[RMDB]
Description: Chemical mapping of a 177-nucleotide RNA with DMS. The reactions ran in a buffer of 150 mM KOAc, 10 mM MgCl2 and 150 mM bicine (pH 8.5), at 24 C. The data come from the RNA Mapping Database (RMDB), library OK2TRN.
RNA sequence: GGGAACGACUCGAGUAGAGUCGAAAAGGUUUGGCAAUGGCAAAAGAGGGAUCAAGUCAGGAGCAGGUUGGGAAGCCUUGGAGGAGGAGGAGGAGUUCUCUGGGUGUCCUUGAUGGAGGCCCCCCAGCAAGGCGUAUGUUUUCGAACAUACGCCUUGAAAAGAAACAACAACAACAAC
Reactivity to DMS in 0.01 (KOAc 150mM, MgCl2 10mM, bicine 150mM(pH8.5), 24C), signal-to-noise 1, nucleotides 027 to 126: g010g010u000u000u000g020g040c050a090a090u010g020g020c090a080a030a090a080g030a080g010g000g000a050u000c050a070a120g000u010c080a090g020g030a110g000c090a050g000g010u000u000g000g010g020a070a100g010c060c030u000u000g010g010a100g030g000a110g010g000a070g000g000a060g000g000a100g000u000u010c030u000c010u010g010g010g000u000g020u010c040c010u010u000g000a120u020g030g010a040g010g040c010c010c050c000c020c000a080g000